[RMDB]
RNA sequence: GGGAACGACUCGAGUAGAGUCGAAAAUCAACGGCUCAUCAGUGGGCUAAGCCCAGACUUAUGAGAGAGUAAGACCUCUCAGCCCCUCCACCUUGGAGUGCCCUAUUCGGAGCACUGCAGUUCCCGACCUUGAUUACCACUUCGGUGGUAAUCAAGGAAAAGAAACAACAACAACAAC
Reactivity to DMS in 0.01 (KOAc 150mM, MgCl2 10mM, bicine 150mM(pH8.5), 24C), signal-to-noise 1, nucleotides 027 to 126: u000c120a160a060c280g010g000c040u000c030a050u010c100a140g000u020g000g000g000c060u000a060a100g000c070c010c000a190g000a050c160u000u000a050u000g010a040g000a020g000a030g000u030a130a180g000a300c230c010u000c000u010c000a040g000c050c000c000c010u010c000c000a060c300c140u000u000g000g000a010g030u000g000c010c000c000u000a200u000u000c110g000g020a050g000c010a020c000u000g000c010a090g000u000u000c000c000c000g020a140
Reactivity to 2A3 in 0.01 (KOAc 150mM, MgCl2 10mM, bicine 150mM(pH8.5), 24C), signal-to-noise 1, nucleotides 027 to 126: u060c000a060a020c060g040g000c050u000c020a060u030c010a090g140u010g010g040g000c060u090a110a000g040c000c000c000a030g080a070c060u070u110a040u190g010a010g000a000g000a000g030u040a110a000g040a080c010c010u000c000u000c020a080g040c010c010c000c010u030c040c010a090c000c060u070u020g040g020a000g000u010g010c030c020c010u160a300u120u300c170g000g000a080g000c010a010c000u060g090c000a000g000u020u000c040c000c010g020a030
Chemical mapping of a 177-nucleotide RNA with DMS and 2A3.
The reactions ran in a buffer of 150 mM KOAc, 10 mM MgCl2 and 150 mM bicine (pH 8.5), at 24 C.
For DMS, 574 sequencing reads were counted.
It was measured as part of the RMDB library VIROID.